Structure probing data (2A3) for a 177-nucleotide construct.
The 2A3 profile rests on 821 reads.
The reactions ran in a buffer of 150 mM KOAc, 10 mM MgCl2 and 150 mM bicine (pH 8.5), at 24 C.
The data come from the RNA Mapping Database (RMDB), library OK1LIB.

RNA sequence: GGGAACGACUCGAGUAGAGUCGAAAAAGCAGGUGCAGGAGGCGGCGUGUGCGGCCGUUGCCUCCAUCGUCGACGGCUACGCCGAGGCGACACGGCGUUUUGAAAGGCUUGACGUGGUGCCGAAGCAGGCAUGCGUGAUGUUCGCAUCACGCAUGCCAAAAGAAACAACAACAACAAC
Reactivity to 2A3 in 0.01 (KOAc 150mM, MgCl2 10mM, bicine 150mM(pH8.5), 24C), signal-to-noise 1, nucleotides 027 to 126: a000g040c140a000g080g020u090g030c010a000g000g030a010g020g000c000g010g000c020g010u150g030u060g000c030g130g030c000c000g040u020u000g010c000c000u060c000c000a010u020c020g030u000c000g060a230c000g020g040c040u080a080c110g000c010c000g040a050g030g020c000g000a000c000a030c070g000g000c010g030u020u090u010u050g120a100a060a000g040g000c000u070u160g000a050c020g120u050g000g040u080g050c010c030g030a040a050g030c030a020